Chemical mapping of a 177-nucleotide RNA with DMS. The RNA was probed in 150 mM KOAc, 10 mM MgCl2 and 150 mM bicine (pH 8.5) at 24 C. It was measured as part of the RMDB library M2PK90.

[RMDB]
RNA sequence: GGGAACGACUCGAGUAGAGUCGAAAAAUAAACGCGAAAUCCCAAAGAAACGCGAAAGGACCGAAGCCGAUAACUACGAAAAGUAGGGUCCAAAGCGUAAAUCGGCUAAAAACGCUAUAGAAAAAAACGAAGAUAGAAAGUUCGCUUUCUAUCUUCGAAAAGAAACAACAACAACAAC
Reactivity to DMS in 0.01 (KOAc 150mM, MgCl2 10mM, bicine 150mM(pH8.5), 24C), signal-to-noise 1, nucleotides 027 to 126: a040u000a020a020a060c020g000c000g010a300a100a090u000c000c020c000a120a140a130g000a040a110a080c010g020c010g010a030a130a180g000g000a000c020c010g000a070a030g000c010c000g020a050u000a110a270c050u000a000c020g000a160a060a070a120g020u000a010g000g000g010u000c010c000a020a060a140g020c060g010u000a000a030a030u000c000g000g000c010u020a070a060a010a030a020c050g000c030u000a130u030a110g000a010a000a030a140a000a130a080
Background:
For DMS, 850 sequencing reads were counted.